[RMDB]
RNA sequence: GGGAACGACUCGAGUAGAGUCGAAAACUACAUAAAUUCGUUUAUGUAGCAUCGGGGACGCGCAGACUCCCCGUCAGAGGGCUCUAGCCUUCCAAGCUCUGCACUCAACAGCUUUCGAGCUGUUGAAUCUUAAAUACGACUUCGGUCGUAUUUAAGAAAAAGAAACAACAACAACAAC
Reactivity to 2A3 in 0.01 (KOAc 150mM, MgCl2 10mM, bicine 150mM(pH8.5), 24C), signal-to-noise 5, nucleotides 027 to 126: c000u010a000c010a010u020a020a030a020u060u060c100g030u050u010u000a010u010g000u000a020g040c030a100u230c020g000g000g000g000a000c050g090c010g000c290a000g000a020c010u010c000c010c000c000g000u000c010a000g000a010g010g010g000c020u080c190u300a070g000c020c000u010u000c030c050a010a010g010c060u010c010u000g000c000a010c040u010c000a000a010c000a000g020c000u080u100u210c260g130a000g000c000u000g010u000u010g000a000a000
Reactivity to DMS in 0.01 (KOAc 150mM, MgCl2 10mM, bicine 150mM(pH8.5), 24C), signal-to-noise 5, nucleotides 027 to 126: c000u010a000c000a000u000a000a010a030u010u010c180g010u000u000u000a010u000g020u000a010g000c100a070u010c010g000g000g000g010a020c180g010c160g010c000a020g010a020c010u000c000c000c000c000g010u000c110a010g000a020g000g000g020c010u000c250u000a140g010c000c000u000u000c010c300a020a010g010c070u000c000u000g010c000a250c230u010c000a000a000c000a000g000c000u000u000u010c210g000a020g020c000u000g000u000u000g000a020a060
Chemical mapping of a 177-nucleotide RNA with 2A3 and DMS. In probing experiments dimethyl sulfate is read out at A N1 and C N3, which are open when not base-paired. DMS adducts were read by reverse transcription with MarathonRT. The reactions ran in a buffer of 150 mM KOAc, 10 mM MgCl2 and 150 mM bicine (pH 8.5), at 24 C.